RNA sequence: GGGAACGACUCGAGUAGAGUCGAAAAGCUCCGGUCUUCGGACCGGAGCAAAGAAGCUCAUAAUGACGCAAACAACGGCGUCAGCGUGAGCAUACGCGGAAAAAACUACCUUGUUCGCAAGGUAGAAGUUUGUUGUUUAGUUCGCUAAACAACAAACAAAAGAAACAACAACAACAAC
Reactivity to DMS in 0.01 (KOAc 150mM, MgCl2 10mM, bicine 150mM(pH8.5), 24C), signal-to-noise 1, nucleotides 027 to 126: g000c010u000c000c010g020g010u000c000u000u000c260g020g040a010c000c000g020g000a000g030c000a000a010a060g000a170a120g000c000u000c010a000u000a060a210u000g000a010c000g000c000a040a040a160c250a050a130c300g000g000c000g000u010c000a020g000c300g000u000g000a000g020c000a040u020a010c160g020c190g000g000a020a030a050a120a100a140c010u000a010c000c000u010u000g000u000u000c120g020c000a000a000g000g000u010a000g010a020a080
Reactivity to 2A3 in 0.01 (KOAc 150mM, MgCl2 10mM, bicine 150mM(pH8.5), 24C), signal-to-noise 2, nucleotides 027 to 126: g020c010u000c020c010g000g010u030c000u090u120c190g040g020a000c000c000g010g010a000g000c000a000a010a010g010a010a020g000c010u010c000a000u010a060a040u020g010a000c000g000c010a060a180a220c080a150a130c210g070g000c010g000u000c010a000g020c010g010u000g000a000g000c010a000u160a000c120g080c030g150g000a110a140a010a010a000a000c000u010a010c020c000u020u010g030u090u060c250g000c060a000a000g000g000u010a010g000a010a020